Chemical mapping of a 177-nucleotide RNA with DMS and 2A3. The RNA was probed in 150 mM KOAc, 10 mM MgCl2 and 150 mM bicine (pH 8.5) at 24 C.
RNA sequence: GGGAACGACUCGAGUAGAGUCGAAAAUCACGCAGAUCUGUCAAUGCUCGACACCUGGAAGCAGCUGAUCAGUCCAACAUCUUGAUCAAUGUCAUGCUGAUAAGUUACGUGUUCCAAACACGUGUCACUAACCACCCCUUUUCGAAGGGGUGGUUAGAAAAGAAACAACAACAACAAC
Reactivity to DMS in 0.01 (KOAc 150mM, MgCl2 10mM, bicine 150mM(pH8.5), 24C), signal-to-noise 3, nucleotides 027 to 126: u020c040a050c110g000c040a060g000a050u000c060u010g010u010c030a070a040u010g010c080u000c070g010a060c040a090c080c030u000g000g010a090a030g000c030a050g020c000u010g000a010u010c010a080g000u010c300c180a060a100c100a000u020c030u020u010g040a060u030c200a050a060u000g000u010c050a160u040g020c020u000g000a020u010a020a010g000u020u010a040c030g000u010g000u000u000c040c080a040a100a050c050a010c040g000u020g020u040c090a240
Reactivity to 2A3 in 0.01 (KOAc 150mM, MgCl2 10mM, bicine 150mM(pH8.5), 24C), signal-to-noise 6, nucleotides 027 to 126: u080c010a020c050g010c010a030g020a140u000c020u020g070u110c050a060a130u130g060c040u040c070g020a020c020a020c020c010u010g010g000a030a000g030c010a010g040c050u020g010a040u030c020a010g090u040c040c010a050a050c010a130u050c040u110u160g060a050u080c060a050a050u080g030u110c050a030u110g010c010u040g030a060u050a140a040g090u090u150a020c060g000u040g050u050u060c100c010a010a110a030c030a000c040g030u020g030u030c020a000